[RMDB]
RNA sequence: GGGAACGACUCGAGUAGAGUCGAAAAUCACACUGGAUAGUAGAUAUUGGGUGUCACGGUCUCUACUAUCUAGUGUGAGCACUACAGGUAGACUAGACUGUGAUACCCAAUGUCUAUCUGUGGUGUAGUAUCUCGAAGUAUUCGUACUUUGAGAUACAAAAGAAACAACAACAACAAC
Reactivity to 2A3 in 0.01 (KOAc 150mM, MgCl2 10mM, bicine 150mM(pH8.5), 24C), signal-to-noise 9, nucleotides 027 to 126: u070c000a000c000a000c010u030g040g050a040u030a050g020u000a000g010a010u010a000u010u010g020g010g010u070g040u060c020a010c020g010g000u000c000u010c010u050a120c000u010a030u020c010u000a000g000u000g000u010g000a010g020c000a000c000u030a010c020a020g000g010u000a000g010a080c080u020a010g010a020c020u020g010u010g040a020u040a020c000c000c000a000a010u020g000u000c000u000a000u000c000u010g050u030g000g010u010g000u010a020
Reactivity to DMS in 0.01 (KOAc 150mM, MgCl2 10mM, bicine 150mM(pH8.5), 24C), signal-to-noise 9, nucleotides 027 to 126: u030c060a060c000a010c010u000g010g010a080u030a040g010u010a020g010a010u000a000u000u000g000g000g010u000g000u010c030a020c010g010g010u000c010u000c070u010a060c000u000a050u010c160u000a010g010u000g000u030g010a070g030c020a010c000u010a030c230a110g000g000u000a000g000a200c240u020a070g000a020c020u000g010u000g000a020u000a020c010c010c000a000a010u010g010u000c000u000a000u020c020u010g010u020g000g010u000g000u000a120
Chemical mapping of a 177-nucleotide RNA with 2A3 and DMS.
For DMS the reverse transcriptase was MarathonRT.
For 2A3, 94,962 sequencing reads were counted.
It was measured as part of the RMDB library OK1LIB.
For DMS, 51,969 sequencing reads were counted.
Reactivities are given for positions 27 through 126.
For 2A3 the reverse transcriptase was SuperScript II with manganese.